[RMDB]
RNA sequence: GGGAACGACUCGAGUAGAGUCGAAAAGAGGGUUGGUUCGCCAACCCUCCAUUAAAAUCAGCGGUAAAUAUUUAGCAGGCGUUACCGCUGAACGCCUGCAUAGACUCAGUCUGUUCGCAGACUGAAAACAUUCAGCGUUGUUCGCAACGCUGAAUGUAAAAGAAACAACAACAACAAC
Reactivity to 2A3 in 0.01 (KOAc 150mM, MgCl2 10mM, bicine 150mM(pH8.5), 24C), signal-to-noise 1, nucleotides 027 to 126: g000a000g030g000g000u000u020g000g080u050u100c200g020c030c000a000a000c000c000c000u020c000c000a010u000u000a020a000a010a060u000c000a000g050c020g170g120u130a040a180a010u110a150u140u300u240a060g000c010a000g000g000c000g000u000u030a120c000c020g010c000u000g000a000a000c000g000c010c000u000g000c000a000u120a030g070a020c020u000c030a000g010u020c010u030g020u040u030c190g020c090a000g000a000c000u000g000a050a010a010
Reactivity to DMS in 0.01 (KOAc 150mM, MgCl2 10mM, bicine 150mM(pH8.5), 24C), signal-to-noise 1, nucleotides 027 to 126: g000a030g030g040g000u000u000g000g030u010u000c260g050c010c000a010a000c000c000c000u000c000c000a080u000u000a010a090a070a110u010c000a020g010c000g020g020u000a020a020a060u000a070u000u000u010a110g020c000a010g010g000c020g020u000u010a030c030c030g010c010u000g000a010a020c030g010c000c010u000g020c000a100u010a060g000a110c250u000c000a010g000u000c000u000g010u000u020c190g000c000a010g000a020c000u000g000a000a080a100
Conditions: 150 mM KOAc, 10 mM MgCl2 and 150 mM bicine (pH 8.5), 24 C. Chemical mapping of a 177-nucleotide RNA with 2A3 and DMS. The DMS profile rests on 1,029 reads.